[RMDB]
RNA sequence: GGGAACGACUCGAGUAGAGUCGAAAAAAAGAUAUGGAGGAAUCUCUAGCGUGACUGAUGACCUACAACCAAGUACUCGGAAACGAGUAUCAAAGUGUAGCAAGGUUCGGGUUCCUCCUAAGUCAAACCAUGUCUUUGAGUUCGCUCAAAGACAUGGAAAAGAAACAACAACAACAAC
Reactivity to DMS in 0.01 (KOAc 150mM, MgCl2 10mM, bicine 150mM(pH8.5), 24C), signal-to-noise 2, nucleotides 027 to 126: a060a110a220g000a000u000a290u010g000g000a000g010g030a060a010u000c020u020c200u000a140g040c150g030u000g010a020c010u000g010a070u010g010a130c300c050u030a000c000a100a030c020c010a150a300g030u000a000c000u000c010g010g010a090a110a180c000g030a010g010u000a000u000c080a100a100a290g010u010g010u040a020g040c010a070a040g000g000u010u000c090g010g050g010u000u000c000c000u000c000c000u020a000a080g000u000c040a100a060a230
Reactivity to 2A3 in 0.01 (KOAc 150mM, MgCl2 10mM, bicine 150mM(pH8.5), 24C), signal-to-noise 2, nucleotides 027 to 126: a000a000a050g080a040u100a060u220g000g010a010g000g000a000a000u000c130u090c100u300a230g090c080g180u270g040a040c030u060g050a160u120g030a170c000c030u000a000c010a140a100c030c050a060a100g030u000a020c000u000c010g030g020a020a070a070c010g020a000g000u000a010u170c040a010a190a050g040u000g000u030a000g050c020a180a300g010g010u040u060c030g010g000g010u010u030c000c010u020c010c000u020a030a000g000u000c000a000a130a010
Source: RMDB library TTRDES, as collected in RNAgym. The record gives the reactivity of an RNA of 177 nucleotides to DMS and 2A3. Values cover nucleotides 27 to 126. The 2A3 profile rests on 2,080 reads.